[RMDB]
RNA sequence: GGGAACGACUCGAGUAGAGUCGAAAAGUUAAGUGUCACAUCGAUAGAUCAAGGUGCCUACAAGCGAAGUGGGUCAUCGUGGGGUCGCCCGUACGAGGAGAAAGCCGGUUUCGGCUUCUCCCUCGACGCACGCUCCUGCUACAGCCUCUUCCCUGUACAAGUUUGCAAAGUUCGCUUUGCAAACUUGAAAAGAAACAACAACAACAAC
Reactivity to 2A3 in 0.01 (KOAc 150mM, MgCl2 10mM, bicine 150mM(pH8.5), 24C), signal-to-noise 2, nucleotides 027 to 156: g100u100u080a130a000g040u010g060u160c040a040c030a060u070c050g100a110u080a160g060a070u060c060a100a110g030g010u010g000c000c000u040a050c040a070a020g070c050g080a110a030g010u110g010g010g030u100c020a040u030c040g010u030g000g020g000g050u300c020g000c000c000c000g040u090a210c000g020a030g020g040a090g000a080a120a000g000c000c010g000g060u050u230u300c030g080g000c000u000u000c060u010c000c010c000u000c000g000a000c000g010c010a040c030g000c000u010c000c000u020g000c020u040a040c010a010g020c000c000u020c000u050u010c000c010c000u000g000u020a030